[RMDB]
RNA sequence: GGGAACGACUCGAGUAGAGUCGAAAAGGUAAACACCGUGCGGUUCCUGUGGUUCGCCUCGCCAAAGCAUAAAUUUUAAAGAAAACGAGGAGAAGAAGGAACUCACCUGUCGUCGUCGACGAAGGCCGAAUCUUAUAUUCUUCGGAAUAUAAGAUUCAAAAGAAACAACAACAACAAC
Reactivity to DMS in 0.01 (KOAc 150mM, MgCl2 10mM, bicine 150mM(pH8.5), 24C), signal-to-noise 7, nucleotides 027 to 126: g000g020u000a090a120a160c160a070c040c020g020u000g020c160g010g010u000u000c010c000u000g010u000g020g010u000u000c010g000c000c010u000c000g010c050c080a100a120a120g010c130a120u010a070a070a150u000u000u010u020a040a120a180g000a100a080a120a150c010g000a010g000g010a050g000a010a030g000a110a030g000g000a010a020c010u000c040a100c020c050u000g010u000c000g010u010c070g010u010c130g000a030c020g010a050a050g010g020c160c130
Reactivity to 2A3 in 0.01 (KOAc 150mM, MgCl2 10mM, bicine 150mM(pH8.5), 24C), signal-to-noise 8, nucleotides 027 to 126: g090g100u060a070a090a010c030a020c050c020g020u090g040c100g010g020u010u070c010c000u210g090u080g300g250u030u010c010g000c010c000u000c000g010c040c050a120a070a030g050c040a080u200a180a110a090u200u200u100u210a150a240a040g080a040a090a010a010c010g000a000g000g020a010g000a000a000g030a010a000g000g000a010a000c000u010c020a040c010c030u130g070u080c000g000u000c010g110u060c090g000a010c010g010a020a010g050g000c040c050
Structure probing data (DMS and 2A3) for a 177-nucleotide construct. The reactions ran in a buffer of 150 mM KOAc, 10 mM MgCl2 and 150 mM bicine (pH 8.5), at 24 C. Values cover nucleotides 27 to 126.